RNA sequence: GGGAACGACUCGAGUAGAGUCGAAAACAUUAAUUAUUUGCAGCCACUCUUGCGGUACAGAGGACGAACCGUGCAUAACCAAAUGCGUAUCGGGCAAACGUUCGUGAAUGGCUUUGAUGCGGUCGAAGUCGCGUAAAUGAUUCGUCAUUUACGCGACAAAAGAAACAACAACAACAAC
Reactivity to DMS in 0.01 (KOAc 150mM, MgCl2 10mM, bicine 150mM(pH8.5), 24C), signal-to-noise 2, nucleotides 027 to 126: c070a110u020u010a070a100u010u020a130u000u010u010g000c110a090g040c000c040a090c040u010c020u010u010g000c000g010g000u000a070c110a070g000a050g010g010a140c040g000a100a080c020c020g000u000g010c040a050u000a030a120c100c080a030a060a010u000g000c030g020u000a040u010c000g000g010g010c170a060a100a110c040g000u000u000c040g020u000g000a090a090u000g000g000c010u020u040u000g010a130u000g010c040g020g000u010c040g000a090a110
Reactivity to 2A3 in 0.01 (KOAc 150mM, MgCl2 10mM, bicine 150mM(pH8.5), 24C), signal-to-noise 2, nucleotides 027 to 126: c000a040u150u240a170a100u170u150a300u150u200u180g050c050a010g000c010c000a070c030u010c010u080u100g080c020g060g000u030a040c050a040g100a030g030g040a030c020g020a010a020c000c030g010u020g000c020a010u010a070a050c020c020a070a180a080u050g000c020g010u040a050u120c030g000g000g040c030a110a060a040c030g030u060u050c010g000u030g160a070a080u080g000g000c000u010u010u070g090a100u040g030c000g000g050u030c020g040a130a000
The record gives the reactivity of an RNA of 177 nucleotides to DMS and 2A3. Source: RMDB library OK2TST, as collected in RNAgym. The reactions ran in a buffer of 150 mM KOAc, 10 mM MgCl2 and 150 mM bicine (pH 8.5), at 24 C. Values cover nucleotides 27 to 126. 2A3 adducts were read by reverse transcription with SuperScript II with manganese. For 2A3, 1,553 sequencing reads were counted. DMS adducts were read by reverse transcription with MarathonRT. Reactivities are rounded to 0.1 and cut off at 0 and 3.